[RMDB]
RNA sequence: GGGAACGACUCGAGUAGAGUCGAAAAUACCCGCAUCGAGCUAGCAAGAGCAUGUUGGAAGCUAGCAACCUUCAUGCCGAUGCAAUCCGAGGCUAAUGCCAACGACUCUACUCGAGUCGACAUAGAAGUAUAGUAUGCUAUUCGUAGCAUACUAUACAAAAGAAACAACAACAACAAC
Reactivity to DMS in 0.01 (KOAc 150mM, MgCl2 10mM, bicine 150mM(pH8.5), 24C), signal-to-noise 3, nucleotides 027 to 126: u000a110c100c070c060g000c060a030u000c020g000a060g030c040u000a150g000c000a030a040g000a100g010c010a010u000g010u000u000g000g010a040a300g010c040u000a060g010c030a030a120c010c020u010u000c010a010u010g010c010c010g010a300u000g000c000a040a040u020c060c060g010a080g000g000c000u000a070a020u000g010c030c040a050a090c030g000a010c010u000c000u000a010c010u000c000g000a010g000u000c000g020a020c030a090u010a100g010a040a120
Reactivity to 2A3 in 0.01 (KOAc 150mM, MgCl2 10mM, bicine 150mM(pH8.5), 24C), signal-to-noise 5, nucleotides 027 to 126: u080a010c000c020c040g000c000a030u050c060g100a020g030c040u090a010g000c030a010a010g010a010g030c000a010u000g010u010u010g020g020a060a010g020c060u090a040g070c100a010a030c000c000u010u000c000a000u010g000c000c000g030a020u030g000c010a030a070u080c070c060g060a050g020g010c020u060a070a020u110g020c010c010a040a030c020g000a000c000u010c000u010a010c000u000c000g000a000g000u000c000g000a000c000a000u140a030g150a200a010
An RNA of 177 nucleotides, treated with DMS and 2A3 and read out base by base. Values cover nucleotides 27 to 126. Conditions: 150 mM KOAc, 10 mM MgCl2 and 150 mM bicine (pH 8.5), 24 C. For 2A3, 14,428 sequencing reads were counted.